[RMDB]
RNA sequence: GGGAACGACUCGAGUAGAGUCGAAAAGUGAACAAAACUGUGCACCAAAGAUGAGGGCUGAUGCCAGGGGCUGACAGAUUCUCACAAACGAAUUGACAUGCCAGAGAGGACAGAGCCAUUUUGUCUGAUGAGCAGAUACUUUCGAGUAUCUGCUCAUAAAAGAAACAACAACAACAAC
Reactivity to 2A3 in 0.01 (KOAc 150mM, MgCl2 10mM, bicine 150mM(pH8.5), 24C), signal-to-noise 1, nucleotides 027 to 126: g010u000g030a090a020c040a010a100a090a060c090u030g040u120g130c030a030c100c090a040a120a000g090a050u040g030a050g000g000g000c030u030g070a120u130g200c020c000a060g030g050g000g000c040u000g050a000c000a010g090a070u030u000c060u010c010a050c040a060a150a000c090g070a010a000u090u000g010a000c020a030u140g030c010c010a020g040a000g000a040g060g010a020c070a050g030a010g130c060c000a060u120u110u030u030g110u070c020u080g020
Reactivity to DMS in 0.01 (KOAc 150mM, MgCl2 10mM, bicine 150mM(pH8.5), 24C), signal-to-noise 2, nucleotides 027 to 126: g030u000g000a110a060c050a040a060a090a090c110u010g020u000g010c010a070c020c040a070a140a040g010a090u030g000a140g010g020g000c050u000g000a100u000g000c030c030a080g040g000g000g000c030u020g030a050c090a070g020a070u010u010c010u000c040a090c260a060a100a140c200g010a010a050u000u020g010a100c070a040u000g000c000c010a040g000a080g020a160g020g000a030c030a070g020a060g010c030c060a040u000u000u000u000g030u010c040u010g000